[RMDB]
An RNA of 207 nucleotides, treated with 2A3 and DMS and read out base by base. Source: RMDB library M2RFPK, as collected in RNAgym. Conditions: 150 mM KOAc, 10 mM MgCl2 and 150 mM bicine (pH 8.5), 24 C. The 2A3 profile rests on 2,501 reads. DMS adducts were read by reverse transcription with MarathonRT.

RNA sequence: GGGAACGACUCGAGUAGAGUCGAAAAAAUUAGAGGCAAUUUGAAAUGAUUUAAAUUAGCUCAACCCUACUGCACUUACCGAACUAGAUAACGGUGUAGUAGGGGUAAAUUCUCCGCAUUCGGUGCGCAACCACCUGAGGUUUCGACCUCAGGUGAAGUAUAGUGUGUUCUUCGGAACACACUAUACAAAAGAAACAACAACAACAAC
Reactivity to 2A3 in 0.01 (KOAc 150mM, MgCl2 10mM, bicine 150mM(pH8.5), 24C), signal-to-noise 3, nucleotides 027 to 156: a000a010u180u080a030g010a060g030g020c010a010a020u030u010u040g070a090a120a120u250g070a190u070u090u140a020a030a040u020u030a030g010c000u000c030a020a030c000c010c000u000a000c000u000g000c000a010c010u070u070a030c030c020g060a090a040c030u050a100g030a150u080a230a070c090g020g000u000g000u000a000g000u000a000g010g000g000g010u000a000a000a000u020u010c020u010c000c030g000c000a020u050u040c050g100g010u030g010c020g010c040a060a050c050c000a000c000c000u000g010a000g030g030u010u040u150c190g080a040c030c000u010c000a000g000g000u000g000a000a000
Reactivity to DMS in 0.01 (KOAc 150mM, MgCl2 10mM, bicine 150mM(pH8.5), 24C), signal-to-noise 1, nucleotides 027 to 156: a020a070u020u000a100g000a120g020g020c010a070a040u010u000u000g020a100a090a180u000g000a210u010u000u000a040a030a040u000u000a130g030c000u000c020a050a050c000c000c000u000a020c000u020g010c000a010c000u010u010a090c040c000g010a070a100c210u000a120g010a090u020a060a080c200g050g010u000g020u000a010g040u000a000g000g000g000g010u010a010a060a140u010u000c020u000c000c090g000c060a230u000u010c080g020g070u010g030c030g000c120a120a150c020c010a020c000c000u000g020a010g030g000u010u010u000c300g000a020c060c000u000c000a000g010g000u000g010a000a050